[RMDB]
RNA sequence: GGGAACGACUCGAGUAGAGUCGAAAAGAUGCUCGUGAGGUCGGCCGGGAAUCCGGGCCACGGGGCAUCGUCUAUCUUGGGAAUGGCCCCUCCCAGAUCGGGCACCACCUUGAGGGAUUGCCCGGCCACAGACUAGACGGUUCGCCGUCUAGUCUGUAAAAGAAACAACAACAACAAC
Reactivity to 2A3 in 0.01 (KOAc 150mM, MgCl2 10mM, bicine 150mM(pH8.5), 24C), signal-to-noise 1, nucleotides 027 to 126: g010a000u020g050c000u000c020g070u060g070a190g040g300u070c030g060g060c030c080g090g100g000a150a130u080c020c000g000g030g000c050c010a030c050g060g000g080g000c000a000u000c000g000u010c010u020a130u040c060u060u130g040g000g050a110a160u100g130g010c010c000c010c040u000c020c000c000a010g010a080u070c010g020g010g040c010a030c020c010a070c010c070u150u170g080a300g050g000g070a070u050u110g030c000c000c010g000g000c010c000
Reactivity to DMS in 0.01 (KOAc 150mM, MgCl2 10mM, bicine 150mM(pH8.5), 24C), signal-to-noise 1, nucleotides 027 to 126: g000a000u000g010c000u000c020g020u000g010a160g010g030u000c070g030g010c110c020g050g000g000a110a080u000c020c000g020g010g000c020c000a030c030g020g000g000g010c020a010u000c010g010u010c090u000a020u030c060u010u020g020g030g030a110a120u000g000g000c010c020c010c150u010c000c010c000a090g020a030u000c030g010g000g000c010a060c070c140a120c100c090u000u010g010a180g000g010g010a130u010u010g010c000c000c000g000g020c090c080